The record gives the reactivity of an RNA of 177 nucleotides to DMS and 2A3.
RNA sequence: GGGAACGACUCGAGUAGAGUCGAAAAGUGUGUGCGCCCGCCCCUGCGCCCCUCCCCCUGCCUACAACUUGAUCUUAUUUGAUCGGGUAGUGGCCCCAGCCUGCCCGGCAGACCCGAGAUGAAAAGCUCUACGGUCUAAUUUCGAUUAGACCGUAGAAAAAGAAACAACAACAACAAC
Reactivity to DMS in 0.01 (KOAc 150mM, MgCl2 10mM, bicine 150mM(pH8.5), 24C), signal-to-noise 3, nucleotides 027 to 126: g010u010g010u010g020u010g000c050g040c050c040c020g020c070c020c030c090u000g010c070g010c030c040c040c010u000c030c010c000c020c020u000g000c010c010u000a030c060a100a040c040u000u000g000a020u000c010u010u040a150u010u040u010g000a050u030c010g020g000g010u000a050g020u000g000g000c020c060c020c020a090g000c070c030u000g010c030c020c010g000g000c080a050g000a110c040c030c020g000a100g030a140u010g010a040a060a110a160g010c140
Reactivity to 2A3 in 0.01 (KOAc 150mM, MgCl2 10mM, bicine 150mM(pH8.5), 24C), signal-to-noise 4, nucleotides 027 to 126: g060u050g030u030g010u020g030c020g010c000c020c000g020c000c000c000c000u020g000c010g010c010c010c010c000u000c020c000c020c000c010u030g010c000c000u080a060c030a100a040c010u020u060g040a030u010c010u050u200a220u300u190u180g060a060u020c000g000g010g000u020a050g030u030g030g020c000c000c020c000a010g000c000c000u040g000c000c000c000g000g010c030a020g010a030c000c010c020g030a050g010a060u160g070a050a060a030a060g020c020

The RNA was probed in 150 mM KOAc, 10 mM MgCl2 and 150 mM bicine (pH 8.5) at 24 C. It was measured as part of the RMDB libraries RFM100 and RFMREP. For DMS the reverse transcriptase was MarathonRT. For 2A3, 3,662 sequencing reads were counted.